[RMDB]
RNA sequence: GGGAACGACUCGAGUAGAGUCGAAAAUCACCGAUUCGUCGGUGAAAACAGGAGUCCGGGUGCAAAUCCCGGAUGGCGAGCCCGGCCGCUGACCUGCCGGGGUAACAAAGACCAAGUUCGCUUGGUCCUUACGCAAUAAGUUCGCUUAUUGCGUAAGAAAAGAAACAACAACAACAAC
Reactivity to 2A3 in 0.01 (KOAc 150mM, MgCl2 10mM, bicine 150mM(pH8.5), 24C), signal-to-noise 3, nucleotides 027 to 126: u010c000a000c000c000g010a020u020u040c200g030u010c010g090g000u030g000a070a010a000a020c040a050g190g030a020g160u010c000c000g010g000g010u030g000c010a040a020a030u020c020c010c020g000g000a000u000g000g000c010g010a070g090c020c000c010g020g000c010c000g000c030u070g060a090c020c020u010g020c000c000g000g010g000g000u040a060a020c020a040a120a010g000a000c000c000a000a000g010u030u070c120g040c110u000u010g000g000u000c010
Reactivity to DMS in 0.01 (KOAc 150mM, MgCl2 10mM, bicine 150mM(pH8.5), 24C), signal-to-noise 4, nucleotides 027 to 126: u010c000a000c000c000g000a010u000u010c190g020u000c000g000g000u010g010a010a020a120a210c130a090g000g020a120g050u000c010c000g020g000g010u000g000c240a060a240a110u000c000c000c000g010g010a000u010g010g010c020g000a160g000c000c000c010g000g000c020c000g030c000u010g010a100c100c040u000g000c000c000g000g020g010g020u010a050a070c190a070a090a090g000a010c000c000a010a000g010u000u020c190g020c010u000u000g000g000u000c000
Chemical mapping of a 177-nucleotide RNA with 2A3 and DMS. The DMS profile rests on 3,523 reads. Values cover nucleotides 27 to 126. It was measured as part of the RMDB library RFMREP. High DMS reactivity at an A or C suggests that its Watson-Crick edge is free. The 2A3 profile rests on 5,230 reads. Reactivities are rounded to 0.1 and cut off at 0 and 3. As a SHAPE reagent, 2A3 marks flexible, mostly unpaired nucleotides at the ribose 2'-OH. DMS adducts were read by reverse transcription with MarathonRT.